[RMDB]
RNA sequence: GGGAACGACUCGAGUAGAGUCGAAAAUGUAGAUUGACGAUAUCCUCGAGCCAGUCGAACAGGCGCGCAAUGUCUGGGGGUAUGCCUGGGAGCCAUGCGCGGGAGUCGCGCGUGCGCAACGGGAGGAAUACCAACGGAUUUUCGAAUCCGUUGGUAUAAAAGAAACAACAACAACAAC
Reactivity to DMS in 0.01 (KOAc 150mM, MgCl2 10mM, bicine 150mM(pH8.5), 24C), signal-to-noise 5, nucleotides 027 to 126: u010g010u010a080g000a050u010u000g010a300c020g020a060u000a090u010c030c010u000c020g000a080g000c010c010a100g020u010c030g010a120a130c080a050g020g010c020g000c160g010c180a100a060u010g010u000c020u000g020g010g000g010g010u000a130u010g000c030c010u000g000g020g000a240g020c020c010a010u000g000c010g030c000g000g010g010a140g000u010c020g010c000g010c010g020u000g000c160g020c020a050a090c080g010g000g010a090g010g000a130
Reactivity to 2A3 in 0.01 (KOAc 150mM, MgCl2 10mM, bicine 150mM(pH8.5), 24C), signal-to-noise 3, nucleotides 027 to 126: u150g030u080a060g050a300u010u080g030a020c020g020a020u030a090u090c030c010u000c010g000a000g050c010c040a080g050u060c020g020a070a060c020a060g030g010c020g000c020g010c100a040a130u180g040u020c030u030g000g010g000g000g030u080a080u130g050c000c020u040g030g040g040a030g000c010c010a010u020g000c010g010c010g000g080g090a180g180u300c000g000c000g000c000g000u010g000c100g000c020a050a030c010g010g010g010a030g000g040a070